[RMDB]
Source: RMDB library RSTRND, as collected in RNAgym. This 207-nucleotide RNA was probed chemically with DMS and 2A3. The reactions ran in a buffer of 150 mM KOAc, 10 mM MgCl2 and 150 mM bicine (pH 8.5), at 24 C. For 2A3, 5,092 sequencing reads were counted.

RNA sequence: GGGAACGACUCGAGUAGAGUCGAAAACAGAUAUAACUGCAAAAAAUAAUGAACCAUCUUACGCAUUAGCUGCCUAAUCGCAGUAGCGUAGCCCUUUGUUGAGUCCACGGCAACAUUCUCGGCCUAAUUAGUGGAUUAGCUGCUGGCAUUUAUGUUCACUCAUAUAUACGUUCGCGUAUAUAUGAGUAAAAGAAACAACAACAACAAC
Reactivity to DMS in 0.01 (KOAc 150mM, MgCl2 10mM, bicine 150mM(pH8.5), 24C), signal-to-noise 2, nucleotides 027 to 156: c020a030g020a180u000a120u010a130a170c030u000g010c030a020a050a090a080a120a130u000a040a100u000g010a110a100c060c010a080u000c050u000u000a000c020g010c010a070u000u000a110g000c020u000g020c000c010u010a100a150u000c090g030c000a010g010u000a080g000c000g030u000a030g010c050c010c030u000u000u000g030u000u000g000a060g000u000c020c010a050c030g010g000c000a020a050c020a070u000u000c020u000c060g030g000c020c060u000a050a090u010u000a080g050u000g000g010a090u000u000a100g040c000u000g000c000u000g020g000c100a090u000u000u000a040u010g020u000u000c040
Reactivity to 2A3 in 0.01 (KOAc 150mM, MgCl2 10mM, bicine 150mM(pH8.5), 24C), signal-to-noise 7, nucleotides 027 to 156: c020a000g090a010u120a020u080a200a110c060u110g010c100a060a060a040a040a060a050u210a110a150u160g040a060a040c060c030a060u050c040u070u040a010c010g000c000a070u130u130a040g020c000u000g000c010c030u140a110a070u170c050g000c010a010g010u040a030g000c000g000u010a030g020c000c000c000u060u040u070g020u040u030g030a020g030u000c020c020a010c010g010g010c010a030a020c010a060u130u020c080u050c060g090g010c010c000u070a140a120u140u090a070g010u010g050g010a030u000u060a020g010c030u090g010c030u050g040g000c040a060u050u110u080a060u160g030u040u040c010

Reactivities are given for positions 27 through 156.